[RMDB]
RNA sequence: GGGAACGACUCGAGUAGAGUCGAAAACACAUAAUUCUGUAAGGGCACUGAGAGUAUGUAUGUUAACUAGGCAGAAGGAGAAGCUGUGGUGGAAAAAAGUAACAAUUGAGCUAAAUUUUGAAGGAGGAAUUGGAAGUUCUUAAGAAAGGAAGAUAUGUCUUAGACUAGUGUUCGCACUAGUCUAAGAAAAAGAAACAACAACAACAAC
Reactivity to DMS in 0.01 (KOAc 150mM, MgCl2 10mM, bicine 150mM(pH8.5), 24C), signal-to-noise 1, nucleotides 027 to 156: c060a080c050a080u000a110a140u000u000c060u000g000u010a080a100g030g020g030c030a070c040u020g010a110g030a110g000u040a040u000g010u010a060u000g040u010u000a050a160c080u000a160g020g040c080a110g010a120a060g010g010a110g000a060a080g000c000u010g080u010g000g010u000g010g000a000a010a070a090a020a050g010u000a050a060c020a040a160u000u000g000a080g030c040u000a060a110a150u010u000u000u020g010a110a080g080g000a090g030g000a050a060u010u000g010g000a040a110g000u000u000c000u000u010a040a090g000a050a050a040g000g010a040a080g000a110u000a060u000g030
Reactivity to 2A3 in 0.01 (KOAc 150mM, MgCl2 10mM, bicine 150mM(pH8.5), 24C), signal-to-noise 2, nucleotides 027 to 156: c030a000c000a060u150a120a080u230u090c030u040g070u050a020a160g010g020g030c030a020c060u030g040a000g000a030g140u070a040u080g020u030a080u060g030u090u060a060a050c070u060a050g080g000c010a020g040a070a040g030g030a040g010a020a010g020c030u040g020u010g010g020u040g000g000a030a040a030a050a030a000g070u080a020a050c080a100a040u070u080g000a010g000c010u040a060a030a290u100u160u100u140g040a010a010g000g010a020g020g000a020a040u060u040g010g000a020a000g040u080u050c030u040u080a030a030g050a060a040a000g070g000a000a020g020a020u150a070u240g050
The record gives the reactivity of an RNA of 207 nucleotides to DMS and 2A3. It was measured as part of the RMDB library OK3TST. Conditions: 150 mM KOAc, 10 mM MgCl2 and 150 mM bicine (pH 8.5), 24 C. For 2A3 the reverse transcriptase was SuperScript II with manganese. The 2A3 profile rests on 1,134 reads.